[RMDB]
RNA sequence: GGGAACGACUCGAGUAGAGUCGAAAAGAUAGCUAUCUGCUGAGAUGUACCAUCAUGUCAGUUAGCAUUCGUGCCAUACUAUGAUAUGAUCAGAUGCAUCACGUGAUGAGUCACGGCACUGUAACAAGCCAGCUACCAGGUUCGCUUGGUAGCUGGCAAAAGAAACAACAACAACAAC
Reactivity to DMS in 0.01 (KOAc 150mM, MgCl2 10mM, bicine 150mM(pH8.5), 24C), signal-to-noise 3, nucleotides 027 to 126: g010a040u010a050g000c070u040a050u010c040u020g020c060u000g010a050g000a000u000g010u000a040c100c260a070u000c010a000u000g030u000c020a030g010u000u010a160g000c010a100u020u010c060g000u000g000c050c040a060u030a060c040u020a060u000g010a030u000a040u000g000a080u010c120a090g020a080u020g000c040a070u020c020a160c080g040u000g010a060u000g020a180g000u000c010a040c040g000g000c090a060c080u010g020u030a050a070c170a090a050
Reactivity to 2A3 in 0.01 (KOAc 150mM, MgCl2 10mM, bicine 150mM(pH8.5), 24C), signal-to-noise 5, nucleotides 027 to 126: g080a030u150a010g020c040u070a050u160c020u070g020c030u050g050a050g000a130u030g040u070a060c040c030a020u050c000a030u040g020u030c020a010g000u020u030a000g000c010a000u060u080c080g030u050g060c000c020a060u040a130c050u110a090u180g150a130u020a010u040g050a030u050c030a030g060a080u030g000c000a030u030c020a020c020g020u040g020a030u010g050a040g130u010c020a000c010g010g040c010a000c090u050g020u090a110a020c030a120a030

Structure probing data (DMS and 2A3) for a 177-nucleotide construct. It was measured as part of the RMDB library OK1LIB. The reactions ran in a buffer of 150 mM KOAc, 10 mM MgCl2 and 150 mM bicine (pH 8.5), at 24 C.